[RMDB]
RNA sequence: GGGAACGACUCGAGUAGAGUCGAAAACCGGAGUUCGCUCCGGAAAAAAUCCUAAGUCAUACCAGAGCGUCCCGAGUGGCGAGGAUCUCGGAAACGAGGGAGCCACGGCGGACGCGACGAAGGUAUGAUAUGGAAAAAACUAGUCUUCGGACUAGAAUAUCGGAUAGAAGUUCGCUUCUAUCCGAUAAAAAGAAACAACAACAACAAC
Reactivity to DMS in 0.01 (KOAc 150mM, MgCl2 10mM, bicine 150mM(pH8.5), 24C), signal-to-noise 1, nucleotides 027 to 156: c000c010g000g000a110g010u000u000c240g050c010u020c030c020g000g000a000a000a060a070a070a060u000c010c010u000a070a200g010u000c010a040u020a030c010c010a110g010a300g020c000g020u000c010c080c020g030a300g000u000g020g010c000g040a120g010g020a050u000c020u000c000g010g000a110a130a210c000g010a100g030g000g010a180g000c000c000a010c000g000g040c180g000g000a120c000g000c000g040a000c050g000a080a160g020g010u000a030u000g000a010u010a200u000g000g000a000a020a040a040a110a200c000u000a000g010u000c000u000u000c300g010g000a040c000u000a020g000a110a150
Reactivity to 2A3 in 0.01 (KOAc 150mM, MgCl2 10mM, bicine 150mM(pH8.5), 24C), signal-to-noise 1, nucleotides 027 to 156: c000c000g000g000a010g000u080u130c210g030c080u000c000c000g010g110a170a040a000a000a000a010u070c060c000u090a110a020g000u000c000a000u000a000c000c000a020g010a010g100c000g000u030c040c020c020g070a080g030u000g000g000c030g030a170g030g020a010u000c000u000c000g080g000a090a050a060c000g000a000g010g020g000a010g000c000c000a000c000g010g020c140g000g000a000c000g000c000g000a000c010g040a060a040g000g000u000a000u010g020a000u000a020u050g000g000a030a000a050a120a000a020c000u060a000g000u000c010u030u040c220g090g000a000c000u030a000g000a020a020
The record gives the reactivity of an RNA of 207 nucleotides to DMS and 2A3.
For 2A3 the reverse transcriptase was SuperScript II with manganese.
Source: RMDB library RNAMAK, as collected in RNAgym.
For DMS, 2,014 sequencing reads were counted.
The RNA was probed in 150 mM KOAc, 10 mM MgCl2 and 150 mM bicine (pH 8.5) at 24 C.